This 177-nucleotide RNA was probed chemically with DMS and 2A3. DMS (dimethyl sulfate) methylates the pairing face of unpaired adenines and cytosines. For 2A3 the reverse transcriptase was SuperScript II with manganese. The DMS profile rests on 4,089 reads.
RNA sequence: GGGAACGACUCGAGUAGAGUCGAAAAGAUAUGGAUGACGGUGUAGCAAGACUGACACAGGAGGAGCUCGGAAACGAGCUCUACCCACCCUGUGGAGGUUGAUGACCUACACCGUCAUCCUAAGUCAUCUAACCAUAAACUUCGGUUUAUGGUUAGAAAAAGAAACAACAACAACAAC
Reactivity to DMS in 0.01 (KOAc 150mM, MgCl2 10mM, bicine 150mM(pH8.5), 24C), signal-to-noise 5, nucleotides 027 to 126: g010a080u000a300u000g000g000a020u000g000a020c000g010g010u010g020u000a000g000c060a070a080g010a010c000u000g010a300c000a000c010a010g000g000a240g030g000a020g010c000u000c000g000g010a050a090a170c000g030a010g000c000u000c000u010a020c050c070c100a300c120c000c000u000g020u000g010g000a300g000g000u010u000g000a100u010g000a080c300c000u000a000c010a000c010c000g000u000c000a000u000c000c000u000a010a060g010u000c040a240
Reactivity to 2A3 in 0.01 (KOAc 150mM, MgCl2 10mM, bicine 150mM(pH8.5), 24C), signal-to-noise 1, nucleotides 027 to 126: g020a030u040a040u100g000g000a010u000g020a020c000g020g000u030g000u000a000g070c090a300a300g030a050c010u030g000a000c010a010c000a010g000g020a040g000g000a010g010c000u000c000g060g020a000a090a000c000g020a000g040c010u000c000u010a000c000c000c000a050c030c000c000u010g000u000g000g010a030g000g030u000u060g070a300u160g050a060c030c020u000a010c010a010c000c000g000u000c000a000u020c000c010u000a010a000g010u000c000a000